[RMDB]
RNA sequence: GGGAACGACUCGAGUAGAGUCGAAAAACUCACCGGCGAUUACGAUCGCCGGUGAGACGGUUUGGGACUCAGGAUGUGGUCAAGUGUUGUUAAGGCAUGUUCAGCAACAAUACUUGACCACAUUUAAUGUUCAAACUAAUUUCGAUUAGUUUGAACAAAAAGAAACAACAACAACAAC
Reactivity to 2A3 in 0.01 (KOAc 150mM, MgCl2 10mM, bicine 150mM(pH8.5), 24C), signal-to-noise 3, nucleotides 027 to 126: a000c000u000c000a000c000c000g010g000c020g010a030u040u040a080c220g060a080u010c000g000c000c010g020g020u000g000a000g000a000c010g020g020u010u110u140g040g000g010a020c040u000c090a030g000g080a000u000g000u000g000g000u010c000a000a000g020u000g020u020u030g020u080u160a170a160g160g000c060a060u190g160u300u300c060a100g000c010a030a040c000a000a000u010a010c000u000u000g000a000c010c000a000c000a000u000u000u000a000a000
Reactivity to DMS in 0.01 (KOAc 150mM, MgCl2 10mM, bicine 150mM(pH8.5), 24C), signal-to-noise 7, nucleotides 027 to 126: a120c010u000c000a010c010c010g010g010c010g020a030u010u010a110c190g010a080u000c010g040c010c010g020g010u000g000a000g020a020c120g010g010u010u010u010g010g000g010a300c070u000c100a130g000g000a010u000g010u000g010g000u000c000a010a000g010u000g010u000u000g000u000u010a120a240g010g010c030a100u020g010u020u020c130a100g010c160a050a020c000a010a010u000a010c000u000u000g000a000c000c000a000c000a000u000u000u000a060a120